RNA sequence: GGGAACGACUCGAGUAGAGUCGAAAAGAGGACCCCAUCUUACCUCGUUAAAAAUGGUGGGAAAAGAUAACUGCCAACGAAAACUACGCUUUAGCUGCUUAAUAACGCAGCUACGUCCUGACGGAAGCUUGCCCGGGGCUUCUGUCGGGGCGUGACCCUAUAUUAGGUGCUUCGGCACCUAAUAUAGAAAAGAAACAACAACAACAAC
Reactivity to DMS in 0.01 (KOAc 150mM, MgCl2 10mM, bicine 150mM(pH8.5), 24C), signal-to-noise 2, nucleotides 027 to 156: g010a030g030g010a300c010c000c000c000a050u050c010u000u000a060c010c010u000c010g000u000u010a000a000a010a030a040u010g000g030u000g000g000g000a150a050a130a090g010a150u000a080a130c080u000g020c040c040a050a120c080g000a080a080a070a110c050u010a040c040g010c040u000u000u000a070g050c020u000g000c020u000u030a070a080u010a140a090c120g050c070a050g020c000u000a000c000g010u000c000c010u000g010a010c000g000g000a020a040g000c000u010u000g010c020c020c000g030g000g020g000c000u010u020c000u000g020u000c010g040g020g010g020c010g010u010g000a020c020c110
Reactivity to 2A3 in 0.01 (KOAc 150mM, MgCl2 10mM, bicine 150mM(pH8.5), 24C), signal-to-noise 4, nucleotides 027 to 156: g000a000g020g000a010c000c000c000c010a000u020c000u040u090a060c000c010u010c030g140u060u050a010a020a000a000a020u300g000g000u030g000g030g000a060a050a000a010g020a030u100a060a050c070u100g050c050c030a070a040c140g090a070a090a080a040c090u200a080c080g060c060u090u120u070a020g000c010u020g000c010u110u140a150a100u140a290a060c100g000c000a000g000c000u010a000c000g000u000c010c000u000g000a010c010g010g010a000a000g000c000u010u030g020c010c010c010g020g000g010g010c000u000u000c000u000g000u000c000g000g000g000g010c000g000u000g000a000c020c010

An RNA of 207 nucleotides, treated with DMS and 2A3 and read out base by base. For 2A3, 3,405 sequencing reads were counted. The DMS profile rests on 3,524 reads.